An RNA of 177 nucleotides, treated with 2A3 and read out base by base.
[RMDB]
RNA sequence: GGGAACGACUCGAGUAGAGUCGAAAACUGGCGAUCACUCAGUAUUUAUCGUCAGGAUCGACCAAGAAGUAAAACACGAGAUCUUGUUGAAAUAUUUUGUGCUGAGAAUCCUAUAUUGUACUAAAAACGUAUCACGAGGGUUCGCCCUCGUGAUACGAAAAGAAACAACAACAACAAC
Reactivity to 2A3 in 0.01 (KOAc 150mM, MgCl2 10mM, bicine 150mM(pH8.5), 24C), signal-to-noise 2, nucleotides 027 to 126: c000u000g010g010c000g010a050u010c140a060c110u060c070a060g020u080a180u180u180u090a130u000c000g000u010c000a010g000g040a060u000c010g040a010c000c030a060a080g090a110a000g110u280a020a070a140a000c070a000c060g010a010g060a110u000c030u050u080g010u040u160g010a040a090a060u110a040u040u180u090u100g030u030g000c010u030g000a020g090a100a010u020c000c000u070a110u170a080u230u280g080u080a070c050u140a080a000a000a000a000